Background:
Structure probing data (2A3 and DMS) for a 177-nucleotide construct.
[RMDB]
RNA sequence: GGGAACGACUCGAGUAGAGUCGAAAAGGAGAUUACACAGUUUACGCUACCUGGGACGGUGGAGGAGCAAGAAUCCAUGUGAAGUGUAAAUCAAGAUGCUGGAUUGGAGAGGAAGAACAUGAAAAGGCAGUCAUUCAGAGUUCGCUCUGAAUGACUGAAAAGAAACAACAACAACAAC
Reactivity to 2A3 in 0.01 (KOAc 150mM, MgCl2 10mM, bicine 150mM(pH8.5), 24C), signal-to-noise 2, nucleotides 027 to 126: g060g000a040g020a060u080u170a000c030a010c040a060g070u030u100u080a080c090g010c030u050a110c030c020u050g070g000g000a020c040g020g030u010g060g020a060g030g000a020g000c010a010a030g040a080a050u010c010c020a020u130g030u070g100a090a140g030u010g020u180a060a100a020u090c030a080a000g020a040u090g000c030u070g030g010a060u050u060g020g020a090g000a000g030g000a010a060g000a030a040c000a010u040g110a070a040a000a000g070g060
Reactivity to DMS in 0.01 (KOAc 150mM, MgCl2 10mM, bicine 150mM(pH8.5), 24C), signal-to-noise 2, nucleotides 027 to 126: g010g020a070g000a100u010u000a030c090a090c120a080g020u000u010u000a090c090g030c030u000a100c040c010u000g000g020g000a100c090g020g030u010g010g000a120g000g000a050g020c080a050a100g020a100a080u000c030c030a050u010g030u010g000a070a070g050u000g000u000a050a080a090u010c080a070a080g000a060u000g020c040u010g000g000a120u000u000g020g000a040g010a080g010g020a050a030g010a040a040c170a070u000g000a060a030a050a120g010g020

The reactions ran in a buffer of 150 mM KOAc, 10 mM MgCl2 and 150 mM bicine (pH 8.5), at 24 C.